[RMDB]
RNA sequence: GGGAACGACUCGAGUAGAGUCGAAAAAACAAUACCAUCCCCACCAUGGGAAACUUUAAGUGAAGAGUCUCUCACGUUUUGAACACUUUCAGGGAAGAUGGCUUUAAAUAGCUUUUCUUCAGGAGAGCACUGGCAAAAUAUUCGUAUUUUGCCAGUGAAAAGAAACAACAACAACAAC
Reactivity to DMS in 0.01 (KOAc 150mM, MgCl2 10mM, bicine 150mM(pH8.5), 24C), signal-to-noise 2, nucleotides 027 to 126: a090a050c120a070a040u000a140c100c060a200u000c020c000c000c080a060c210c070a100u000g000g000g010a040a060a040c000u000u000u020a080a130g040u020g010a090a120g010a040g010u000c030u000c010u000c030a050c110g010u010u010u000u010g030a100a050c200a110c020u000u010u000c010a070g040g000g000a000a020g010a010u010g000g020c000u000u010u030a040a060a080u010a000g010c010u000u000u000u000c000u000u000c000a110g010g000a050g020a010g010
Reactivity to 2A3 in 0.01 (KOAc 150mM, MgCl2 10mM, bicine 150mM(pH8.5), 24C), signal-to-noise 2, nucleotides 027 to 126: a000a000c100a040a050u100a100c000c030a040u050c020c040c020c040a010c020c030a130u160g030g000g080a050a010a000c040u130u120u150a220a090g110u120g210a090a100g000a050g060u000c030u000c010u010c030a040c130g090u090u030u060u190g090a100a010c030a020c070u040u070u090c050a020g200g080g000a020a020g040a020u020g000g000c000u100u060u070a150a300a300u180a090g020c000u160u150u080u000c010u000u000c010a010g000g070a010g000a000g000